[RMDB]
RNA sequence: GGGAACGACUCGAGUAGAGUCGAAAAGAUAUGGACGUUCUUUUGACGCACCUACUUCGGAAACGAAGUAGUGCGAUAAGAACGUGUCCUAAGUCAAAACAGUGCUCCUGUUCGCAGGAGCACUGAAGUGCAUUCGACUGUUCGCAGUCGAAUGCACAAAAGAAACAACAACAACAAC
Reactivity to DMS in 0.01 (KOAc 150mM, MgCl2 10mM, bicine 150mM(pH8.5), 24C), signal-to-noise 1, nucleotides 027 to 126: g000a060u000a200u020g010g000a030c000g000u000u010c000u000u000u010u000g010a200c080g030c000a010c130c100u000a010c000u000u000c020g000g000a110a010a090c010g010a000a000g030u000a010g030u000g010c010g030a040u000a000a000g000a000a000c010g020u010g000u000c010c000u000a030a170g000u000c030a010a090a100a220c030a000g020u000g000c000u010c000c000u010g000u000u000c170g060c030a000g000g000a020g010c000a000c000u000g000a010a040
Reactivity to 2A3 in 0.01 (KOAc 150mM, MgCl2 10mM, bicine 150mM(pH8.5), 24C), signal-to-noise 1, nucleotides 027 to 126: g030a000u070a040u250g010g000a000c030g010u000u020c040u040u070u130u260g210a180c000g010c020a030c070c120u020a010c000u000u000c000g070g000a030a180a030c000g030a000a000g020u000a000g000u010g000c000g010a030u040a030a010g000a000a000c000g020u040g030u040c010c020u050a140a060g070u070c050a020a010a050a170c000a020g010u000g000c000u050c010c000u070g070u120u130c250g000c040a010g000g020a000g020c010a000c000u000g000a000a000